[RMDB]
RNA sequence: GGGAACGACUCGAGUAGAGUCGAAAAAUCAUGAAAAUUCUGGGUGACUUUUGUGACUAAAGUCCCAUUGUAAGCCACAUUCUUUGUCCAGCAGUGCUCACUGACUGCUGAAAUAAAUGUUCAUUUGACUAUUUCAAUCCUUCGGGAUUGAAAUAGUAAAAGAAACAACAACAACAAC
Reactivity to DMS in 0.01 (KOAc 150mM, MgCl2 10mM, bicine 150mM(pH8.5), 24C), signal-to-noise 3, nucleotides 027 to 126: a110u010c030a060u000g000a020a050a040a080u020u020c080u020g010g020g020u020g000a050c110u010u000u020u020g010u010g000a010c090u030a080a120a210g050u010c000c000c020a100u040u010g000u000a090a090g010c040c070a070c060a020u000u000c050u000u000u000g040u030c060c030a000g020c040a040g010u010g030c070u030c150a030c160u000g010a030c010u010g000c000u000g020a040a050a030u030a070a040a070u030g000u010u000c060a120u030u020u000g010
Reactivity to 2A3 in 0.01 (KOAc 150mM, MgCl2 10mM, bicine 150mM(pH8.5), 24C), signal-to-noise 4, nucleotides 027 to 126: a000u080c030a040u120g100a000a030a060a050u220u060c080u180g100g040g000u150g050a040c000u050u030u030u080g080u090g050a030c060u100a030a000a050g030u030c000c010c000a020u060u100g100u100a060a010g040c050c000a040c000a060u100u030c040u050u080u180g070u020c040c000a010g000c010a010g000u060g100c040u040c090a070c070u120g050a010c000u000g000c000u000g020a020a010a010u100a010a050a020u090g010u030u010c050a060u020u010u070g040